[RMDB]
RNA sequence: GGGAACGACUCGAGUAGAGUCGAAAAUCGUUCAUGCGGCCGACCUUGGUGCCAAGGUGAUCAACGUCUCCACGAUCACCUGCCUACCCGCCGAUCGGAUGGUCGACCAGGCCGCGCUGGGCGCGGCGGUGCCACCAAUUUUCGAAUUGGUGGCACCAAAAGAAACAACAACAACAAC
Reactivity to 2A3 in 0.01 (KOAc 150mM, MgCl2 10mM, bicine 150mM(pH8.5), 24C), signal-to-noise 1, nucleotides 027 to 126: u060c010g000u030u000c000a090u180g100c020g010g000c030c020g050a060c000c050u030u140g000g070u060g020c080c040a070a010g000g000u010g020a000u030c000a030a080c100g120u050c030u090c100c050a020c090g000a000u000c010a010c000c000u000g000c000c010u060a090c030c000c070g000c040c040g060a180u170c020g110g050a040u040g050g000u020c000g030a040c010c000a060g080g000c000c000g000c020g030c000u160g180g130g000c050g010c100g010g020c000
Reactivity to DMS in 0.01 (KOAc 150mM, MgCl2 10mM, bicine 150mM(pH8.5), 24C), signal-to-noise 2, nucleotides 027 to 126: u010c000g030u000u000c070a050u000g010c030g000g000c010c020g020a020c070c060u010u020g000g010u000g000c150c200a120a040g000g010u000g000a010u000c040a300a110c280g010u010c050u000c060c080a180c220g000a030u000c000a000c000c000u000g010c060c080u000a060c060c000c300g010c060c050g000a070u010c060g000g000a050u000g000g020u010c010g020a050c060c080a160g010g000c000c020g000c030g040c030u000g020g000g010c000g010c050g020g030c010